[RMDB]
RNA sequence: GGGAACGACUCGAGUAGAGUCGAAAACGAACCAAGUAGAAGCACCCGCUUCUCACCUGUAGCGACGCAUAAAGCAGUUGGCAGGUUAAUCACAUUACACAUAACUGUGUAUAAGGAAGAGCGGGUAGUUAUUCAAUUAGUUCGCUAAUUGAAUAACAAAAGAAACAACAACAACAAC
Reactivity to 2A3 in 0.01 (KOAc 150mM, MgCl2 10mM, bicine 150mM(pH8.5), 24C), signal-to-noise 9, nucleotides 027 to 126: c050g030a030a020c030c020a080a020g060u090a050g150a170a010g070c050a010c010c000c000g010c020u180u050c000u010c010a010c010c000u010g010u040a060g220c010g040a040c010g030c040a070u230a270a260a100g010c070a080g020u010u010g030g000c000a000g000g000u000u030a010a010u020c000a020c000a060u010u050a010c010a000c010a010u230a300a120c100u060g000u010g020u020a010u010a120a110g040g010a020a010g000a000g010c000g020g010g000u010a000
Reactivity to DMS in 0.01 (KOAc 150mM, MgCl2 10mM, bicine 150mM(pH8.5), 24C), signal-to-noise 6, nucleotides 027 to 126: c150g000a160a230c050c060a090a110g020u020a070g010a140a180g010c180a060c010c020c030g020c000u000u010c000u010c300a030c000c010u000g010u000a050g020c030g030a020c030g000c010a110u010a090a120a240g010c000a070g020u000u000g010g010c010a010g000g010u000u000a020a130u000c030a040c040a110u000u000a000c010a000c010a060u000a120a160c220u010g020u000g010u000a010u010a140a110g000g000a020a020g000a030g000c000g000g000g020u000a040

Structure probing data (2A3 and DMS) for a 177-nucleotide construct. For DMS, 6,853 sequencing reads were counted. For DMS the reverse transcriptase was MarathonRT. The reactions ran in a buffer of 150 mM KOAc, 10 mM MgCl2 and 150 mM bicine (pH 8.5), at 24 C. The data come from the RNA Mapping Database (RMDB), library RFMREP. In probing experiments dimethyl sulfate is read out at A N1 and C N3, which are open when not base-paired. For 2A3, 14,501 sequencing reads were counted.